[RMDB]
RNA sequence: GGGAACGACUCGAGUAGAGUCGAAAAUGCAGCAUUCAUGACGGAUUAUGCCACCAAAAAAUUCGUUAGUAUAGCUAGUAAUUAUGGGCGUUCCAUCGAUGUCGGCGGUGGAUUUGAUUAUACACCAAUGUGCUUCCAAAUUCGUUUGGAAGCACAUAAAAGAAACAACAACAACAAC
Reactivity to 2A3 in 0.01 (KOAc 150mM, MgCl2 10mM, bicine 150mM(pH8.5), 24C), signal-to-noise 1, nucleotides 027 to 126: u080g020c000a040g030c000a020u000u020c030a030u100g010a000c010g000g030a020u010u030a030u190g100c030c000a080c060c000a130a100a040a000a000a000u010u030c010g010u000u010a020g030u030a040u050a040g010c000u020a070g010u060a070a210u230u120a130u210g080g000g070c050g020u070u000c010c000a030u020c000g010a060u140g020u110c020g010g050c000g000g030u030g030g000a000u050u000u010g020a000u010u110a060u030a100c040a000c120c010a010
Reactivity to DMS in 0.01 (KOAc 150mM, MgCl2 10mM, bicine 150mM(pH8.5), 24C), signal-to-noise 2, nucleotides 027 to 126: u000g030c070a020g040c030a070u000u000c080a110u000g010a010c010g000g010a050u000u000a120u000g030c090c100a200c080c090a000a020a050a060a030a040u000u000c010g010u000u000a050g000u000a050u000a120g040c010u010a120g030u010a070a070u010u000a070u000g000g010g010c000g000u010u000c020c010a040u000c020g000a060u010g000u000c040g000g010c070g010g040u030g030g000a060u020u010u000g000a100u010u000a060u000a060c050a040c060c050a150